[RMDB]
RNA sequence: GGGAACGACUCGAGUAGAGUCGAAAAUGCCGUUGGUGCCGGGGUCGCGGCGGUAUCAACAUUUGCCUGCGAAGGCGAAACAACCGCAUUCUGUUGCGGAUCAACAGCUGGUGCUGGCGCAGUUACAUGGCCAUUAUCAUUUCGAUGAUAAUGGCCAAAAAGAAACAACAACAACAAC
Reactivity to DMS in 0.01 (KOAc 150mM, MgCl2 10mM, bicine 150mM(pH8.5), 24C), signal-to-noise 2, nucleotides 027 to 126: u000g010c030c040g040u010u000g010g030u000g020c020c000g000g010g010g000u010c070g010c030g010g030c040g000g020u000a040u010c050a060a070c060a180u010u000u000g010c000c000u000g000c240g000a240a080g030g000c000g000a020a020a040c260a160a110c030c020g010c010a030u010u020c150u000g020u020u010g000c100g010g000a090u000c030a020a090c050a060g010c080u020g020g010u020g020c030u010g000g020c040g030c070a060g000u000u000a140c150a130
Annotation
Structure probing data (DMS) for a 177-nucleotide construct. The data come from the RNA Mapping Database (RMDB), library OK2TST. Conditions: 150 mM KOAc, 10 mM MgCl2 and 150 mM bicine (pH 8.5), 24 C.